[RMDB]
RNA sequence: GGGAACGACUCGAGUAGAGUCGAAAAACGCGGAGUACGCUCCGCGACAACACUUCUUUCGACCCGCUAUCCGAGACCUAUGGGUCGUUAAAUUACGUCUCUAUCUUACUCACAUAACAUCGCACAAAAAACGUGGUUCGGUUCGCCGAACCACGAACUACACGGUUUUCUUCGGAAAACCGUGUAGAAAAGAAACAACAACAACAAC
Reactivity to 2A3 in 0.01 (KOAc 150mM, MgCl2 10mM, bicine 150mM(pH8.5), 24C), signal-to-noise 2, nucleotides 027 to 156: a000c020g030c010g000g010a020g020u040a010c170g040c040u000c000c000g010c020g080a020c040a080a020c020a050c050u140u160c020u050u230u100c000g000a000c000c010c010g040c120u110a130u100c110c080g030a010g030a090c010c010u090a080u290g000g000g000u000c000g010u000u030a010a020a010u120u060a030c050g020u020c020u000c010u040a130u070c060u090u200a150c100u120c120a050c020a130u300a200a070c010a100u170c070g120c170a070c110a030a030a010a100a150a030c050g000u000g000g000u000u000c030g020g040u050u070c300g000c130c000g010a000a000c000c000a000c010g000a000a000
The record gives the reactivity of an RNA of 207 nucleotides to 2A3. Reactivities are rounded to 0.1 and cut off at 0 and 3. Values cover nucleotides 27 to 156. For 2A3 the reverse transcriptase was SuperScript II with manganese. The 2A3 profile rests on 668 reads. The reactions ran in a buffer of 150 mM KOAc, 10 mM MgCl2 and 150 mM bicine (pH 8.5), at 24 C.